This 177-nucleotide RNA was probed chemically with DMS.
RNA sequence: GGGAACGACUCGAGUAGAGUCGAAAAGGCGGGCCUCCCGAUCCGAGGGGCCCAACCACCAAGUUUGGAGAGCACUUCGGGCCGAAGGGUUGAGUUCUCCCCAGAGGGAGGGAGCCACACGGAGAAACGUUAUCUGCAAGUUCGCUUGCAGAUAACGAAAAGAAACAACAACAACAAC
Reactivity to DMS in 0.01 (KOAc 150mM, MgCl2 10mM, bicine 150mM(pH8.5), 24C), signal-to-noise 1, nucleotides 027 to 126: g000g000c200g000g010g050c040c000u010c010c020c000g020a200u010c070c050g010a290g010g030g000g000c100c040c000a030a000c000c000a100c030c070a200a090g000u000u000u000g010g000a040g020a220g010c130a080c010u000u000c080g010g020g020c090c010g000a130a100g020g000g000u020u000g000a090g010u000u010c110u020c050c000c010c040a040g000a220g020g010g000a090g000g010g000a180g000c040c010a030c060a110c070g010g000a040g000a120a090a080

Source: RMDB library VIROID, as collected in RNAgym. Conditions: 150 mM KOAc, 10 mM MgCl2 and 150 mM bicine (pH 8.5), 24 C. The DMS profile rests on 747 reads.